[RMDB]
RNA sequence: GGGAACGACUCGAGUAGAGUCGAAAAGAUAUGGAUCAGCUGGGAGGAGCAUUUCGGAAACGAAAUGAACUACUCCGACGAUCAGCUGAGUCCUAAGUCAAAAGCGGGAUAGUUCGCUAUCCCGCAAGAUCUUCUUAUACUUCGGUAUAAGAAGAUCAAAAGAAACAACAACAACAAC
Reactivity to 2A3 in 0.01 (KOAc 150mM, MgCl2 10mM, bicine 150mM(pH8.5), 24C), signal-to-noise 2, nucleotides 027 to 126: g010a000u020a000u040g000g000a000u010c000a010g010c010u000g010g000g010a010g000g000a000g050c000a000u000u000u000c010g000g000a000a000a010c000g000a000a000a020u030g010a050a040c070u250a140c020u120c010c000g010a040c000g000a000u010c010a000g000c000u000g010a000g020u030c000c000u000a000a000g000u000c020a010a020a060a140g010c000g000g010g000a000u010a010g030u060u110c220g010c140u000a000u010c000c010c010g000c010a000a000
Reactivity to DMS in 0.01 (KOAc 150mM, MgCl2 10mM, bicine 150mM(pH8.5), 24C), signal-to-noise 5, nucleotides 027 to 126: g010a010u000a030u000g010g010a300u000c000a000g000c000u000g000g010g010a000g010g000a030g030c010a000u000u010u000c000g020g000a020a010a030c000g010a010a010a010u000g010a120a070c180u010a300c030u000c000c010g020a040c230g000a020u010c000a010g000c000u000g000a030g010u010c000c000u000a010a060g000u000c020a060a050a070a120g010c000g000g000g000a010u000a000g010u000u010c220g020c010u000a010u000c000c000c000g010c010a000a010

Chemical mapping of a 177-nucleotide RNA with 2A3 and DMS. For 2A3, 21,652 sequencing reads were counted. The DMS profile rests on 8,546 reads. It was measured as part of the RMDB library TTRDEL. DMS adducts were read by reverse transcription with MarathonRT.